[RMDB]
RNA sequence: GGGAACGACUCGAGUAGAGUCGAAAACCAAUCACUUUAUUGACUCCUAGCCGCAGACCUCCUCAUUCUAACCUGAAUCGGAGGACAACCAGUAAGCUACCCUUUUACCAUCAUUGGACAAGUAGCAUCCGUACUAUACUUCACAACAAUCCUAAUAGAUAAUACGAGUCUUCGGACUCGUAUUAUCAAAAGAAACAACAACAACAAC
Reactivity to DMS in 0.01 (KOAc 150mM, MgCl2 10mM, bicine 150mM(pH8.5), 24C), signal-to-noise 1, nucleotides 027 to 156: c010c030a140a120u000c080a100c090u010u000u010a070u010u000g010a070c010u000c000c020u000a090g030c030c010g050c060a080g050a250c000c020u000c010c010u000c050a110u010u000c000u010a110a120c140c150u000g000a040a050u000c010g000g040a020g000g010a080c030a040a110c030c060a040g030u000a070a090g030c030u000a030c000c010c050u000u000u000u000a130c040c140a060u010c100a040u000u020g010g010a150c080a020a100g130u000a030g010c050a150u020c050c030g000u010a060c070u000a100u000a030c090u000u010c040a190c030a050a100c070a080a050u000c030c010u000a050a080u000a150
Reactivity to 2A3 in 0.01 (KOAc 150mM, MgCl2 10mM, bicine 150mM(pH8.5), 24C), signal-to-noise 3, nucleotides 027 to 156: c020c000a010a090u150c060a050c050u090u190u180a170u180u180g050a030c020u010c030c010u030a020g050c040c010g050c050a030g060a140c010c000u000c010c030u060c030a060u040u010c030u080a080a240c010c050u040g010a040a020u020c030g040g000a030g000g000a000c000a010a000c020c020a020g020u050a040a030g000c020u040a040c000c000c010u040u070u070u040a080c070c040a060u140c030a080u020u140g040g010a020c030a090a000g010u010a000g020c010a040u040c050c030g080u050a010c010u020a020u030a090c040u060u090c070a030c000a220a060c010a050a060u020c000c000u100a150a000u090a170